[RMDB]
Record summary
This 177-nucleotide RNA was probed chemically with 2A3 and DMS. The RNA was probed in 150 mM KOAc, 10 mM MgCl2 and 150 mM bicine (pH 8.5) at 24 C. For 2A3 the reverse transcriptase was SuperScript II with manganese. For 2A3, 2,373 sequencing reads were counted. It was measured as part of the RMDB libraries RFM100 and RFMREP.
RNA sequence: GGGAACGACUCGAGUAGAGUCGAAAACUGGUUCCUCUUUAAAGUCAAACCAGGAGGCUCCGCCGGACUAGAGGUCGAAAAGGACUGAGUAAAAUACUGCAUUUGAGAGUUUCUCUCCAUUGCAAAGAUUUGAUACUUCCUUCGGGAAGUAUCAAAUAAAAGAAACAACAACAACAAC
Reactivity to 2A3 in 0.01 (KOAc 150mM, MgCl2 10mM, bicine 150mM(pH8.5), 24C), signal-to-noise 4, nucleotides 027 to 126: c000u010g010g000u020u030c030c000u030c050u080u150u130a180a130a030g040u040c060a020a040a040c030c000a000g050g010a030g010g080c000u040c050c020g070c020c010g030g000a020c010u040a040g030a060g130g010u010c020g080a100a090a050a040g080g020a030c020u020g020a020g100u150a020a090a030a050u200a120c070u040g000c010a020u020u040u050g020a040g000a020g070u020u250u030c060u020c000u010c000c000a020u020u010g000c020a000a190a020g100
Reactivity to DMS in 0.01 (KOAc 150mM, MgCl2 10mM, bicine 150mM(pH8.5), 24C), signal-to-noise 3, nucleotides 027 to 126: c000u010g010g010u020u020c030c020u010c100u010u020u040a070a130a100g030u010c060a100a110a130c050c020a060g000g010a080g000g010c050u020c040c040g020c050c040g000g000a060c060u010a040g010a100g000g010u000c020g000a050a050a070a110g000g000a050c050u000g000a110g020u000a080a070a080a100u040a100c130u000g000c000a020u010u010u010g000a020g000a050g000u010u010u030c040u000c010u000c010c060a020u000u000g000c040a050a090a110g020